[RMDB]
RNA sequence: GGGAACGACUCGAGUAGAGUCGAAAAUCCAGGGGCGGUGGCUGCUUGUAGCCAUGGGAUCUCCAACUGCAUGCCAGAGUAAUGGGGAGGCUUUGACAGCCCAGGUCAUCACAGUGCCUGCAGCUGCGUAAGAUAACCUGUUCGCAGGUUAUCUUACAAAAGAAACAACAACAACAAC
Reactivity to DMS in 0.01 (KOAc 150mM, MgCl2 10mM, bicine 150mM(pH8.5), 24C), signal-to-noise 4, nucleotides 027 to 126: u010c000c000a110g000g020g010g020c060g000g040u010g000g010c010u000g010c190u020u000g020u010a060g000c020c040a060u010g010g000g030a150u000c040u010c030c020a060a110c060u000g000c000a040u010g010c060c040a100g010a160g000u000a080a040u000g020g010g020g020a140g020g000c050u000u010u010g010a120c130a060g000c010c160c020a080g020g000u000c030a060u010c090a050c120a140g010u020g010c010c020u000g000c100a050g010c040u000g010c130
Structure probing data (DMS) for a 177-nucleotide construct. The reactions ran in a buffer of 150 mM KOAc, 10 mM MgCl2 and 150 mM bicine (pH 8.5), at 24 C. Source: RMDB library RFMREP, as collected in RNAgym. Values cover nucleotides 27 to 126. For DMS the reverse transcriptase was MarathonRT.